[RMDB]
RNA sequence: GGGAACGACUCGAGUAGAGUCGAAAAUGAACGGCACUAUCAUUACAUCUUCUUUUAUGAAAUUUUAAGGACAUGAUAGCGACAUAAAAGAGUUGGAAAGUCUUGGCUGUAUUUUAUGAUACAUAGCAUGAAAAUUUAGGUUCGCCUAAAUUUUCAUAAAAGAAACAACAACAACAAC
Reactivity to 2A3 in 0.01 (KOAc 150mM, MgCl2 10mM, bicine 150mM(pH8.5), 24C), signal-to-noise 5, nucleotides 027 to 126: u150g030a080a050c060g040g010c090a020c050u040a010u050c020a020u010u120a090c000a090u030c020u210u000c000u070u150u010u050a070u180g090a040a110a060u210u210u160u230a070a030g070g030a030c020a050u080g030a030u050a020g080c030g050a030c020a020u140a020a110a050a010g090a000g020u030u040g060g040a180a080a040g020u000c000u040u040g060g010c010u010g050u010a060u010u080u040u040a150u300g040a020u010a060c040a040u110a020g110c030
Reactivity to DMS in 0.01 (KOAc 150mM, MgCl2 10mM, bicine 150mM(pH8.5), 24C), signal-to-noise 4, nucleotides 027 to 126: u020g010a090a070c130g000g010c040a080c020u000a050u010c020a030u030u010a170c090a070u020c070u020u010c020u010u030u020u040a040u000g000a060a090a130u010u020u040u040a080a090g020g000a110c180a060u010g010a050u010a040g010c060g000a120c040a040u020a050a020a050a030g010a110g020u000u000g000g000a040a080a160g010u000c010u000u000g000g010c020u000g010u000a020u010u000u020u040a080u050g000a060u000a030c030a090u040a080g000c070